Chemical mapping of a 177-nucleotide RNA with 2A3 and DMS. Reactivities are given for positions 27 through 126. Source: RMDB library OK1LIB, as collected in RNAgym. For DMS, 11,171 sequencing reads were counted. Conditions: 150 mM KOAc, 10 mM MgCl2 and 150 mM bicine (pH 8.5), 24 C. DMS adducts were read by reverse transcription with MarathonRT.
RNA sequence: GGGAACGACUCGAGUAGAGUCGAAAAGAUGAAUGCGCGCCAUCUUAUACCGAGUGAUAGGGGCGGAGAAAGAUUCUUUACCAACCUGGUCUUUCUCCGGUAUAGGGAAGAGAGGUGUGCGUACUCACUCGGACUCUUGAUUCGUCAAGAGUUCGAGAAAAGAAACAACAACAACAAC
Reactivity to 2A3 in 0.01 (KOAc 150mM, MgCl2 10mM, bicine 150mM(pH8.5), 24C), signal-to-noise 9, nucleotides 027 to 126: g090a040u150g040a100a080u110g000c000g000c000g000c010c000a230u020c000u020u080a110u150a100c000c020g020a070g090u160g100a100u100a100g040g000g020g050c000g010g000a010g000a000a010a000g020a020u290u230c030u120u210u140a150c060c040a070a090c020c070u040g010g000u000c000u000u010u000c000u000c000c000g010g000u050a030u090a040g020g030g030a100a030g030a020g000a020g030g000u040g010u010g010c010g000u010a040c010u010c020a030
Reactivity to DMS in 0.01 (KOAc 150mM, MgCl2 10mM, bicine 150mM(pH8.5), 24C), signal-to-noise 5, nucleotides 027 to 126: g000a110u020g000a060a040u010g020c020g000c000g000c040c000a120u000c000u000u000a060u020a290c000c010g020a180g010u040g020a080u030a070g010g020g010g010c040g000g000a020g000a000a010a010g000a050u000u010c040u010u030u030a140c200c170a090a130c130c090u000g000g000u000c000u000u000u000c010u010c010c020g020g000u010a030u010a090g000g000g000a180a230g000a040g000a040g000g010u010g020u000g010c000g010u020a040c050u000c050a160